Structure probing data (2A3 and DMS) for a 177-nucleotide construct. Values cover nucleotides 27 to 126. The reactions ran in a buffer of 150 mM KOAc, 10 mM MgCl2 and 150 mM bicine (pH 8.5), at 24 C. The 2A3 profile rests on 1,198 reads.
RNA sequence: GGGAACGACUCGAGUAGAGUCGAAAAGGAUCCAUCAGUACUCAGAAGUUAAGAAGCAUGUUAAAGGCUGGGUCAGUAGUAAAAACACCAAUUUCGAUCAAAGAGGUACGUGAGACAUGGGAAAAGCAUACAGCUAUGCAUUCGUGCAUAGCUGUAUAAAAGAAACAACAACAACAAC
Reactivity to 2A3 in 0.01 (KOAc 150mM, MgCl2 10mM, bicine 150mM(pH8.5), 24C), signal-to-noise 1, nucleotides 027 to 126: g060g020a010u030c000c000a050u010c040a020g030u050a040c000u020c050a070g000a120a000g100u030u070a120a060g070a050a000g040c020a020u100g020u110u090a070a090a060g050g040c020u020g010g050g040u030c010a030g020u000a010g020u040a060a110a050a000a000c050a020c030c000a000a020u020u120u090c030g040a040u070c060a070a010a140g050a030g000g070u040a000c020g010u000g020a030g020a000c020a040u120g020g010g000a030a110a060a000g000c000
Reactivity to DMS in 0.01 (KOAc 150mM, MgCl2 10mM, bicine 150mM(pH8.5), 24C), signal-to-noise 3, nucleotides 027 to 126: g010g010a090u010c010c030a090u000c110a140g020u010a050c060u000c030a080g000a110a070g010u010u000a070a090g000a130a120g000c070a040u010g000u010u000a040a070a070g000g000c010u000g000g020g010u000c050a060g030u010a040g010u000a030a040a070a070a060c150a090c080c050a050a090u000u000u000c050g000a060u010c130a060a040a080g000a060g000g030u010a030c060g010u010g000a090g010a060c060a010u010g000g000g010a060a050a100a120g010c130